RNA sequence: GGGAACGACUCGAGUAGAGUCGAAAAAAAGAUAUGGAAGGAAGUAAAGCUUGGAUUUAUACAGGACCGUAUGUCGGAAACGACAUACUAGUACUGUAUUGUCAGCUUUCUUCCUUCCUAAGUCAAAUCCCUUAAUCACGUUCGCGUGAUUAAGGGAAAAAGAAACAACAACAACAAC
Reactivity to DMS in 0.01 (KOAc 150mM, MgCl2 10mM, bicine 150mM(pH8.5), 24C), signal-to-noise 1, nucleotides 027 to 126: a120a090a100g000a040u010a300u010g010g000a040a000g000g000a020a030g000u020a000a000a020g020c000u000u000g030g000a010u020u010u010a010u000a000c000a000g010g040a130c300c210g000u000a000u000g010u010c000g020g000a220a030a180c000g010a000c010a000u000a000c000u010a040g020u000a100c000u000g000u000a000u000u010g000u000c000a020g000c000u000u000u010c010u010u000c000c000u000u000c000c000u000a010a030g020u000c000a040a080a120
Structure probing data (DMS) for a 177-nucleotide construct. Values are in units of 0.01, from 0 to 300, in steps of 10. For DMS the reverse transcriptase was MarathonRT.